[RMDB]
Source: RMDB library TTRDEL, as collected in RNAgym. This 177-nucleotide RNA was probed chemically with DMS and 2A3. For 2A3 the reverse transcriptase was SuperScript II with manganese. The DMS profile rests on 1,695 reads.
RNA sequence: GGGAACGACUCGAGUAGAGUCGAAAAGAUAUGGAAUGGAACUACAGGCAAUGCGAUGAAAUACUUCGGAAACGAAGUAUGGAGUGACCUGCCAUUCCUAAGUCAAAGUUACCCUUCGGGGUAACAACUACAAGUGGAUCUUCGGAUCCACUUGUAGAAAAGAAACAACAACAACAAC
Reactivity to DMS in 0.01 (KOAc 150mM, MgCl2 10mM, bicine 150mM(pH8.5), 24C), signal-to-noise 2, nucleotides 027 to 126: g010a030u010a300u010g000g000a000a000u000g000g000a120a060c070u010a300c030a020g010g000c210a120a080u000g030c130g010a150u020g000a180a120a010u000a000c010u000u000c000g000g010a040a040a160c000g040a020a000g000u000a000u010g000g010a120g010u000g000a110c020c000u000g000c000c010a000u000u000c000c000u010a010a070g000u020c030a100a120a140g000u000u000a000c000c000c010u000u010c100g000g020g000g000u000a000a000c000a040a180
Reactivity to 2A3 in 0.01 (KOAc 150mM, MgCl2 10mM, bicine 150mM(pH8.5), 24C), signal-to-noise 2, nucleotides 027 to 126: g020a010u000a020u060g000g000a000a000u000g020g010a090a130c100u200a050c300a000g000g060c060a190a240u240g100c140g300a290u080g040a040a000a010u000a000c010u010u000c000g010g020a030a030a020c000g020a010a010g000u000a000u030g000g010a030g020u210g080a250c000c000u010g010c000c000a000u030u010c000c000u010a030a010g010u010c030a010a000a220g010u000u010a000c010c010c000u020u040c290g020g000g000g020u020a020a010c010a020a040

The reactions ran in a buffer of 150 mM KOAc, 10 mM MgCl2 and 150 mM bicine (pH 8.5), at 24 C.